This 177-nucleotide RNA was probed chemically with DMS and 2A3. It was measured as part of the RMDB libraries RFM100 and RFMREP. Values cover nucleotides 27 to 126. The reactions ran in a buffer of 150 mM KOAc, 10 mM MgCl2 and 150 mM bicine (pH 8.5), at 24 C.
RNA sequence: GGGAACGACUCGAGUAGAGUCGAAAAUAUCUUCAUCACAUACCGGGCAUAACGUUGAGUGAGGCACCGACAUUGUUGUCUGUAGACCUGAAAAUUUCAGACGCUUGCCCUUAUCGGCAAGCGUUUUAAAUACAGAGGUAUUCGUACCUCUGUAUUUAAAAGAAACAACAACAACAAC
Reactivity to DMS in 0.01 (KOAc 150mM, MgCl2 10mM, bicine 150mM(pH8.5), 24C), signal-to-noise 6, nucleotides 027 to 126: u030a070u010c030u000u010c040a050u010c080a060c090a080u000a080c080c030g020g010g000c060a050u020a090a060c070g010u020u010g000a140g010u000g000a090g010g000c050a050c040c030g000a060c130a160u010u010g000u000u000g000u010c070u000g010u000a040g000a190c110c000u000g000a030a040a100a120u020u010u010c040a060g000a040c000g010c000u000u000g000c000c010c050u000u040a070u030c290g010g000c010a000a010g000c000g010u000u000u000u000
Reactivity to 2A3 in 0.01 (KOAc 150mM, MgCl2 10mM, bicine 150mM(pH8.5), 24C), signal-to-noise 2, nucleotides 027 to 126: u170a120u000c080u130u100c020a130u040c020a010c020a050u090a050c010c000g020g000g070c070a030u040a150a070c040g030u040u210g050a100g030u050g020a090g020g010c020a040c000c000g020a030c020a120u020u100g030u050u020g000u000c020u040g130u020a050g020a170c060c000u070g040a070a090a070a020u130u160u140c040a000g000a010c000g010c000u000u010g000c000c050c000u050u050a130u090c000g020g030c000a000a000g010c000g000u000u000u000u000